[RMDB]
RNA sequence: GGGAACGACUCGAGUAGAGUCGAAAACCGUAGGUCAUGUGAUGGGCUUUCCGAAGAACUUCGAUUCGAAAGAGUCGAAGGGAGGAAAGAACUACCCACAAUGCAUGACCUAAACGGAAAAGUAUAUGCCUAGAGAUUCGUCUCUAGGCAUAUACAAGACCUCUAGUAGAUUCGUCUACUAGAGGUCAAAAGAAACAACAACAACAAC
Reactivity to DMS in 0.01 (KOAc 150mM, MgCl2 10mM, bicine 150mM(pH8.5), 24C), signal-to-noise 1, nucleotides 027 to 156: c010c010g010u000a010g020g020u010c010a020u000g010u000g080a190u000g000g020g040c010u000u000u040c010c010g000a160a150g000a110a210c020u000u010c030g010a020u000u000c010g010a210a170a240g010a060g010u010c000g010a030a010g000g000g010a210g000g000a050a050a040g010a080a020c030u020a300c000c000c030a040c040a150a150u010g020c030a030u000g010a040c000c030u010a010a000a060c020g010g000a060a070a110a150g000u010a020u000a010u000g000c000c000u000a000g020a060g010a060u000u000c300g020u000c000u000c000u000a010g000g000c010a000u000a000u000a010c010a090a100
Reactivity to 2A3 in 0.01 (KOAc 150mM, MgCl2 10mM, bicine 150mM(pH8.5), 24C), signal-to-noise 3, nucleotides 027 to 156: c000c000g000u010a010g000g010u000c000a000u000g020u090g140a110u010g000g000g010c020u020u000u010c030c000g170a290a000g000a000a000c000u000u000c000g010a000u000u000c000g000a020a000a000g000a000g000u000c000g010a000a000g000g000g000a000g000g000a010a000a000g000a020a010c040u190a070c030c010c000a000c000a000a000u010g000c000a000u000g010a000c000c000u000a000a010a000c010g050g020a050a060a040a050g010u010a000u010a010u000g010c000c000u000a000g000a010g000a030u040u180c240g050u010c100u010c000u000a000g010g010c000a000u000a000u000a000c000a010a010